[RMDB]
RNA sequence: GGGAACGACUCGAGUAGAGUCGAAAAUGAGAGUCGUUGGUCUCUAUAGAGGUUUCUAGCUGAGGAGAUAUAACGUAAAAUAUUCUAGAAACUAAGCAUGUAGAGGUUAGCGGGGAGUUUACUAAGGACGAGAGUUCGAAUCUCUCCACCUCCAUAGCAAUAACAUCCACUUCGGUGGAUGUUAUUGAAAAGAAACAACAACAACAAC
Reactivity to DMS in 0.01 (KOAc 150mM, MgCl2 10mM, bicine 150mM(pH8.5), 24C), signal-to-noise 2, nucleotides 027 to 156: u000g000a190g010a080g020u000c030g000u010u000g040g000u010c010u000c020u000a040u000a050g040a300g010g000u000u010u010c000u010a010g090c190u000g010a160g020g000a080g020a090u000a050u010a120a110c120g000u010a060a050a060a070u000a090u000u010c010u000a030g010a030a030a050c010u010a070a090g000c060a100u020g020u010a080g000a020g020g010u010u000a060g020c120g030g010g030g000a060g010u000u010u000a110c100u020a100a180g020g020a050c020g000a230g010a160g010u000u000c060g010a100a160u000c010u010c010u010c000c020a040c020c010u010c020c020a130u000a130g000
Reactivity to 2A3 in 0.01 (KOAc 150mM, MgCl2 10mM, bicine 150mM(pH8.5), 24C), signal-to-noise 4, nucleotides 027 to 156: u180g010a050g000a000g100u070c040g000u010u020g040g000u010c000u010c000u040a040u070a100g170a040g090g000u010u000u020c010u010a020g000c090u140g110a070g120g080a090g100a010u130a040u060a220a050c050g030u090a010a010a110a070u170a050u120u100c010u010a030g020a000a000a010c010u030a080a030g070c060a060u090g010u070a010g000a010g000g040u040u050a030g230c050g010g000g020g000a020g000u010u080u080a110c100u060a100a030g020g000a010c030g010a020g000a010g070u040u090c040g030a080a090u040c000u000c000u030c000c000a040c000c020u000c010c000a060u070a020g040